[RMDB]
RNA sequence: GGGAACGACUCGAGUAGAGUCGAAAAUAUGUGCUGUGGUGUCACAUCCGUCACUUGCGCCUCUGUCAGAGGGAUGCGCGUUGUGCCCGUCUCAUAGCGACAUCGCCCGGGCGGCACCGGGACCGGGUCGCCCUCUGGUUUUCGAACCAGAGGGCGAAAAAGAAACAACAACAACAAC
Reactivity to DMS in 0.01 (KOAc 150mM, MgCl2 10mM, bicine 150mM(pH8.5), 24C), signal-to-noise 3, nucleotides 027 to 126: u010a050u000g000u000g000c040u000g010u010g020g020u000g000u010c030a060c070a040u010c070c070g000u000c040a030c050u000u010g020c030g000c010c020u000c030u010g010u010c220a110g000a070g020g000g010a080u000g010c050g010c030g030u010u010g020u000g020c070c050c100g000u000c040u000c080a060u010a070g000c030g020a060c050a050u000c140g000c020c040c020g010g010g010c020g000g000c060a130c010c020g020g010g000a120c100c020g000g000g010
Source information:
The data come from the RNA Mapping Database (RMDB), library OK2TRN. Chemical mapping of a 177-nucleotide RNA with DMS.